[RMDB]
RNA sequence: GGGAACGACUCGAGUAGAGUCGAAAAGCGGCUGGACCGUCGGCGUGAUUCCCAAGAUGCUGGUGUACCGCGAACUGGCUGAUCACGACGCCGACGAGCUAAUCGUCACCGACACCAUGUGGGAGCGCGAGUAGUUGCAAUUCGUUGCAACUACUCGAAAAGAAACAACAACAACAAC
Reactivity to DMS in 0.01 (KOAc 150mM, MgCl2 10mM, bicine 150mM(pH8.5), 24C), signal-to-noise 4, nucleotides 027 to 126: g020c010g020g000c060u000g010g000a070c030c040g020u000c000g010g010c010g020u010g010a230u010u010c040c020c010a150a110g000a140u000g000c010u000g000g010u000g020u010a170c070c080g000c040g020a130a020c030u000g000g010c010u000g000a120u000c080a080c160g000a080c020g000c010c000g030a020c000g000a040g020c040u010a040a050u000c010g010u010c030a160c030c020g000a090c100a120c050c030a070u000g020u010g000g010g000a150g010c170g000
Reactivity to 2A3 in 0.01 (KOAc 150mM, MgCl2 10mM, bicine 150mM(pH8.5), 24C), signal-to-noise 2, nucleotides 027 to 126: g040c010g020g000c040u130g040g050a110c040c010g010u000c020g000g000c010g000u040g030a160u080u020c000c000c000a000a020g070a030u080g000c000u010g010g000u040g010u090a110c010c020g040c020g010a020a010c010u020g000g000c010u040g030a070u100c050a030c170g150a020c020g000c000c000g010a010c010g000a030g000c010u080a040a030u020c020g030u040c040a020c070c010g030a030c000a010c020c070a110u100g040u090g050g040g030a030g070c050g010